RNA sequence: GGGAACGACUCGAGUAGAGUCGAAAAAUACUCCUAUAAAACGUAAACUUAAUACUGUUGGAAAGACAUUAAGUGUCAUAGGUAUUAUUGUAUGCGUUGUUAUAUUUGCAAUAGGUGCAUUUUAUCAGGCCACUACUGGGUUCGCCCAGUAGUGGCCAAAAGAAACAACAACAACAAC
Reactivity to 2A3 in 0.01 (KOAc 150mM, MgCl2 10mM, bicine 150mM(pH8.5), 24C), signal-to-noise 1, nucleotides 027 to 126: a000u040a000c000u000c000c020u000a000u000a000a010a000a000c000g000u000a000a270a000c150u000u000a000a000u000a000c000u020g140u010u080g270g000a300a150a150g000a000c000a000u150u150a300a000g130u000g000u000c150a000u000a060g000g000u000a000u000u000a060u050u040g000u060a040u040g000c000g000u000u020g040u150u000a100u060a130u210u000u210g040c030a130a000u000a270g100g000u000g270c020a170u000u000u100u070a270u210c190a000